[RMDB]
RNA sequence: GGGAACGACUCGAGUAGAGUCGAAAACAAUAAAAGGUGAUGCGAAUGACAAAAAUUUGGUGUACAAGCUGAUUUUUUCUCAGCUUUGUCAUAUGCCGGCAAACGUCUGGUGAAGGAUUUUAGUGUCAACGAGCAGGUGAUUCGUCACCUGCUCGUUAAAAGAAACAACAACAACAAC
Reactivity to 2A3 in 0.01 (KOAc 150mM, MgCl2 10mM, bicine 150mM(pH8.5), 24C), signal-to-noise 2, nucleotides 027 to 126: c010a070a000u220a150a090a020a000g080g000u060g060a040u030g010c020g060a070a190u100g060a030c050a010a040a000a000a020u020u030u150g150g000u090g040u020a020c030a020a000g000c000u000g030a090u000u000u020u000u230u130c090u040c040a010g000c000u030u000u030g000u000c000a020u010a030u080g000c000c030g000g000c110a100a240a000c080g110u090c020u040g000g090u060g080a110a000g020g000a000u040u040u040u040a200g070u040g000u020c000
Reactivity to DMS in 0.01 (KOAc 150mM, MgCl2 10mM, bicine 150mM(pH8.5), 24C), signal-to-noise 1, nucleotides 027 to 126: c050a120a010u060a090a010a100a110g020g000u000g000a030u000g000c050g020a090a120u010g000a070c010a000a020a040a020a050u020u020u000g000g050u000g010u000a110c030a050a000g000c000u000g000a000u000u000u050u050u030u000c160u010c020a000g000c000u000u040u000g090u010c000a040u000a290u020g000c050c020g000g000c050a020a250a190c220g030u020c000u000g000g010u000g010a190a160g000g000a010u000u000u000u030a020g000u000g000u010c060